Overview
The data come from the RNA Mapping Database (RMDB), library M2PK50. Structure probing data (DMS) for a 177-nucleotide construct. For DMS the reverse transcriptase was MarathonRT. The reactions ran in a buffer of 150 mM KOAc, 10 mM MgCl2 and 150 mM bicine (pH 8.5), at 24 C. For DMS, 4,948 sequencing reads were counted.

RNA sequence: GGGAACGACUCGAGUAGAGUCGAAAAAUCGGCCCGUUCGCGGGCCGAUACAGGCGGAGGCUCGCACCUAGCGACCGGCGCAAGGACGGACGGUACUGCGAAUUGACUGUGGAUUCGUCCACAGUAACAUACCGGUCUGAUUCGUCAGACCGGUAUGAAAAGAAACAACAACAACAAC
Reactivity to DMS in 0.01 (KOAc 150mM, MgCl2 10mM, bicine 150mM(pH8.5), 24C), signal-to-noise 4, nucleotides 027 to 126: a030u000c010g020g000c000c000c000g050u000u000c190g030c000g040g000g030c010c000g000a000u000a010c090a080g010g010c040g020g000a140g010g000c100u000c050g030c030a080c100c090u000a120g010c020g000a080c060c030g010g010c030g000c060a080a080g000g010a070c040g010g000a060c060g000g010u010a060c080u000g010c040g010a070a110u010u000g020a030c000u000g010u000g010g000a040u000u010c150g000u000c010c000a010c000a010g010u000a040a160